[RMDB]
Description:
This 177-nucleotide RNA was probed chemically with 2A3 and DMS. The data come from the RNA Mapping Database (RMDB), library OK2TRN. Values cover nucleotides 27 to 126. For 2A3 the reverse transcriptase was SuperScript II with manganese. The reactions ran in a buffer of 150 mM KOAc, 10 mM MgCl2 and 150 mM bicine (pH 8.5), at 24 C.
RNA sequence: GGGAACGACUCGAGUAGAGUCGAAAACCCUUGAGGAGACCAAGGGGAUCAAGCUGUUCUGCGACGCUGUCGAACAGCUGCCCAAGACGGUCCUCGCGCGGCCCGGCUUCGAGGUGCACAUCAUCGGCCUCUUAUAUUAGUUCGCUAAUAUAAGAGGAAAAGAAACAACAACAACAAC
Reactivity to 2A3 in 0.01 (KOAc 150mM, MgCl2 10mM, bicine 150mM(pH8.5), 24C), signal-to-noise 9, nucleotides 027 to 126: c010c010c000u010u090g040a030g030g030a090g040a060c030c010a040a040g020g000g010g010a020u150c100a070a010g000c010u000g000u020u010c030u110g110c020g090a160c170g110c300u250g020u080c010g000a010a000c010a000g000c000u010g010c000c000c010a010a020g070a020c080g010g020u020c010c000u010c010g020c020g000c030g020g020c000c000c000g040g000c050u110u090c060g070a120g050g030u130g060c050a040c020a160u170c020a050u080c070g200g040
Reactivity to DMS in 0.01 (KOAc 150mM, MgCl2 10mM, bicine 150mM(pH8.5), 24C), signal-to-noise 9, nucleotides 027 to 126: c010c000c010u000u000g010a080g000g010a120g010a080c030c010a150a110g010g010g000g000a130u010c180a110a030g010c000u000g000u000u000c020u010g020c030g010a150c200g020c180u010g020u000c180g000a020a020c010a000g010c000u000g000c010c000c000a070a100g000a100c130g010g000u000c010c010u000c020g010c270g010c070g000g000c040c020c030g000g010c060u000u010c060g010a070g000g010u000g010c070a070c120a050u010c080a080u000c130g010g000